An RNA of 177 nucleotides, treated with 2A3 and DMS and read out base by base.
[RMDB]
RNA sequence: GGGAACGACUCGAGUAGAGUCGAAAAGUUCAGUCGUUCGCGACUGAACAAACUGAGAAGCGCGAAAACACAGAAAACAAACGGCAACGCGCGUAUCGCCGAAAACCCUGCAGUUCGCUGCAGGGAAGGCUGUAAUAUACUUCGGUAUAUUACAGCCAAAAGAAACAACAACAACAAC
Reactivity to 2A3 in 0.01 (KOAc 150mM, MgCl2 10mM, bicine 150mM(pH8.5), 24C), signal-to-noise 5, nucleotides 027 to 126: g000u000u000c010a000g000u010c000g020u020u080c220g000c020g070a000c000u010g010a000a000c000a000a010a000c040u060g020a000g050a130a040g000c010g000c010g070a060a050a160a010c130a020c020a070g190a120a160a060a040c120a080a160a030c060g030g000c030a050a040c010g010c010g010c010g010u030a040u070c030g010c020c000g060a070a060a050a070c010c000c000u000g000c010a020g000u030u110c160g030c120u000g000c000a000g000g000g000a000a010
Reactivity to DMS in 0.01 (KOAc 150mM, MgCl2 10mM, bicine 150mM(pH8.5), 24C), signal-to-noise 3, nucleotides 027 to 126: g020u000u000c010a000g010u000c000g040u010u030c190g030c010g000a010c000u000g000a000a000c010a020a090a100c120u010g010a080g010a110a280g000c010g010c010g000a070a050a100a100c150a070c150a140g000a070a100a110a100c170a070a060a120c080g000g000c060a110a150c030g000c010g030c020g010u000a040u000c050g010c050c010g020a110a100a080a080c010c000c000u010g020c000a010g010u000u010c200g010c000u000g000c010a010g000g030g000a020a020
Overview: For 2A3, 7,527 sequencing reads were counted. The DMS profile rests on 2,728 reads. DMS adducts were read by reverse transcription with MarathonRT. Values cover nucleotides 27 to 126.